[RMDB]
RNA sequence: GGGAACGACUCGAGUAGAGUCGAAAAGUAUUGGCCGAGUACGGGUCGAUCCGAUACAGAUCGCCGCACUGGUAGAAGCUAGUCAGCGCGAUACCUCGGUGGACGAUGACGUCGGUGCUCGACGCGUAUAAGAGGCAGUCUUCGGACUGCCUCUUAUAAAAGAAACAACAACAACAAC
Reactivity to DMS in 0.01 (KOAc 150mM, MgCl2 10mM, bicine 150mM(pH8.5), 24C), signal-to-noise 2, nucleotides 027 to 126: g000u020a050u000u000g020g030c020c050g010a180g040u010a030c020g010g000g000u000c010g010a040u010c010c000g000a110u000a200c160a210g010a060u000c000g010c020c010g000c040a070c010u000g000g030u000a000g000a120a300g000c010u000a050g010u010c160a060g020c070g020c110g010a300u010a030c030c030u010c140g030g040u020g010g000a040c040g000a020u000g020a150c290g010u000c000g000g030u000g010c180u000c020g000a010c020g050c060g010u000
Reactivity to 2A3 in 0.01 (KOAc 150mM, MgCl2 10mM, bicine 150mM(pH8.5), 24C), signal-to-noise 1, nucleotides 027 to 126: g000u030a120u190u190g210g000c010c020g030a000g020u000a010c000g110g050g000u010c000g010a020u040c020c000g000a010u010a060c110a000g250a040u030c010g000c000c020g000c040a020c070u010g010g000u060a080g070a180a030g030c000u100a030g270u260c160a020g050c070g010c020g130a000u010a020c020c020u050c070g020g020u030g010g020a040c020g040a040u080g040a040c180g040u040c000g020g000u040g140c060u000c020g000a020c040g000c000g120u020

Description:
This 177-nucleotide RNA was probed chemically with DMS and 2A3. For DMS the reverse transcriptase was MarathonRT. The RNA was probed in 150 mM KOAc, 10 mM MgCl2 and 150 mM bicine (pH 8.5) at 24 C. High 2A3 reactivity points to a flexible backbone, as in loops and unpaired stretches. Values are in units of 0.01, from 0 to 300, in steps of 10. The DMS profile rests on 1,193 reads.